[RMDB]
RNA sequence: GGGAACGACUCGAGUAGAGUCGAAAAUGAUACCAUUACACAGAGUGUAUCUCGAUCUGUCAAUACUUCUAGCGGCAACAGCUACGUGGAGUACUCUACUAAUCAGCUCAGCUUCUUGGUCUCCAAGUCCCUACAACUGGUUCGCCAGUUGUAGGGAAAAAGAAACAACAACAACAAC
Reactivity to 2A3 in 0.01 (KOAc 150mM, MgCl2 10mM, bicine 150mM(pH8.5), 24C), signal-to-noise 2, nucleotides 027 to 126: u090g030a000u050a070c010c020a040u030u190a040c100a000c000a040g080a000g100u130g050u050a080u020c090u040c080g020a050u020c060u060g070u100c010a060a090u020a120c040u040u020c000u060a010g020c050g080g010c010a080a020c020a150g000c020u010a020c040g090u060g000g000a000g000u060a060c060u030c010u080a080c000u010a010a110u020c020a020g020c010u010c040a010g020c000u090u000c000u000u050g020g020u040c010u010c010c010a000a030g090
Reactivity to DMS in 0.01 (KOAc 150mM, MgCl2 10mM, bicine 150mM(pH8.5), 24C), signal-to-noise 2, nucleotides 027 to 126: u000g010a120u000a120c030c040a140u010u010a080c110a120c100a090g010a060g040u010g020u000a080u000c010u000c080g000a040u000c010u010g050u020c080a090a070u000a050c040u000u000c060u000a110g040c020g010g000c060a070a080c110a080g010c030u010a060c100g010u010g000g000a060g030u000a030c060u000c060u010a050c040u000a130a070u030c070a060g000c010u000c040a080g010c040u010u010c000u000u000g000g000u000c040u000c000c100a040a100g020
Source: RMDB library OK2TST, as collected in RNAgym. This 177-nucleotide RNA was probed chemically with 2A3 and DMS. DMS adducts were read by reverse transcription with MarathonRT. High 2A3 reactivity points to a flexible backbone, as in loops and unpaired stretches.